[RMDB]
RNA sequence: GGGAACGACUCGAGUAGAGUCGAAAACUUUGAACGUUCGCGUUCAAAGAAACCUCUAAGCAGAUUGGCGAGGUCGACGCUGCGGAGCGCGUUUGCCAAUAAAAAGCGUAGGCUUCGGCCUACGCAAGUCAUGAGCAAAGUUCGCUUUGCUCAUGACAAAAGAAACAACAACAACAAC
Reactivity to DMS in 0.01 (KOAc 150mM, MgCl2 10mM, bicine 150mM(pH8.5), 24C), signal-to-noise 2, nucleotides 027 to 126: c000u010u010u000g010a000a010c000g030u000u000c240g020c010g030u000u000c000a000a030a000g010a050a110a100c020c000u010c110u010a140a120g030c130a090g000a050u000u000g020g000c030g000a070g020g000u010c020g000a150c010g010c000u000g030c230g010g010a060g010c010g030c010g020u000u010u000g010c010c020a090a040u000a040a050a040a080a100g000c000g000u000a000g000g000c010u000u000c240g040g000c000c000u000a000c000g010c010a000a040
Reactivity to 2A3 in 0.01 (KOAc 150mM, MgCl2 10mM, bicine 150mM(pH8.5), 24C), signal-to-noise 3, nucleotides 027 to 126: c000u000u000u020g000a000a000c000g040u060u060c230g050c010g080u000u000c030a000a010a000g000a060a010a010c020c020u020c050u140a110a120g020c070a060g050a300u100u110g060g000c030g010a010g000g040u090c020g020a200c000g000c030u120g060c100g160g080a020g000c100g000c000g010u000u000u000g070c000c000a040a030u110a080a070a000a040a000g010c000g000u000a010g000g010c010u030u060c200g070g000c010c000u010a000c000g000c010a000a000